RNA sequence: GGGAACGACUCGAGUAGAGUCGAAAAUUGUACACCUUCGGGUGUACAAGCUGUCUAGUGGCUAGCAAACGAUCAAAGCUAGCGACUAGACUUUAUUGAUCGCGACGUGCGCUUUCGAGCGCACGAAACAGAUCAUCUUCUUCGGAAGAUGAUCUGUAAAAGAAACAACAACAACAAC
Reactivity to DMS in 0.01 (KOAc 150mM, MgCl2 10mM, bicine 150mM(pH8.5), 24C), signal-to-noise 2, nucleotides 027 to 126: u000u000g000u000a000c000a010c000c000u000u010c210g020g010g000u010g020u000a000c000a010a010g020c190u010g000u010c000u000a020g000u000g010g020c010u010a000g010c010a040a120a140c130g000a090u030c160a070a110a170g000c000u010a000g000c000g010a010c000u000a000g000a010c000u010u010u000a080u000u000g000a050u010c120g040c140g000a210c020g020u000g010c000g010c000u000u000u020c140g010a020g010c000g020c000a010c030g000a030a050
Reactivity to 2A3 in 0.01 (KOAc 150mM, MgCl2 10mM, bicine 150mM(pH8.5), 24C), signal-to-noise 1, nucleotides 027 to 126: u000u000g000u000a000c000a020c010c000u010u040c240g100g000g000u020g010u010a010c010a000a010g000c030u040g000u000c000u000a000g000u000g200g000c010u000a000g000c030a080a060a170c150g110a170u160c150a120a010a000g000c000u010a000g000c010g010a000c000u000a000g000a000c000u010u010u010a030u010u070g080a060u080c060g000c070g180a110c010g000u000g000c000g040c000u090u050u110c220g080a000g000c000g000c000a000c000g000a000a000
The record gives the reactivity of an RNA of 177 nucleotides to DMS and 2A3. For DMS, 1,863 sequencing reads were counted. Conditions: 150 mM KOAc, 10 mM MgCl2 and 150 mM bicine (pH 8.5), 24 C. Values cover nucleotides 27 to 126.